[RMDB]
RNA sequence: GGGAACGACUCGAGUAGAGUCGAAAACUUGAGGAUCGGGAACGUCUCGUGAACCGACAGCUCGGCGUCAUCAGCCAUGCGAUGACGGGCGAAACGAUGCGCCUUCAUGAUCGCGAUCACCGAGCGAUCCCGCAUUAUGGUUCGCCAUAAUGCGGGAAAAAGAAACAACAACAACAAC
Reactivity to 2A3 in 0.01 (KOAc 150mM, MgCl2 10mM, bicine 150mM(pH8.5), 24C), signal-to-noise 4, nucleotides 027 to 126: c020u070u100g080a100g100g060a060u010c020g030g000g020a030a100c020g080u000c020u020c050g010u020g000a040a040c010c010g060a060c080a080g090c120u030c030g000g000c000g040u020c000a020u010c000a020g060c100c080a160u250g020c050g030a020u010g020a010c000g000g000g000c020g040a120a130a050c160g100a110u200g020c010g000c020c030u000u000c020a010u030g020a040u050c040g000c010g060a020u010c030a040c200c000g000a000g020c000g040a060
Reactivity to DMS in 0.01 (KOAc 150mM, MgCl2 10mM, bicine 150mM(pH8.5), 24C), signal-to-noise 4, nucleotides 027 to 126: c040u000u000g000a130g020g000a060u000c000g010g000g020a070a230c060g010u000c180u000c020g020u000g000a030a040c040c000g020a040c180a140g010c220u000c020g010g000c010g000u000c000a000u010c010a120g020c070c210a080u010g010c120g010a020u000g000a020c020g000g010g000c000g000a010a070a120c280g000a080u000g010c010g000c020c010u000u000c020a020u000g010a030u000c180g010c020g000a070u000c030a090c010c000g000a040g000c050g000a110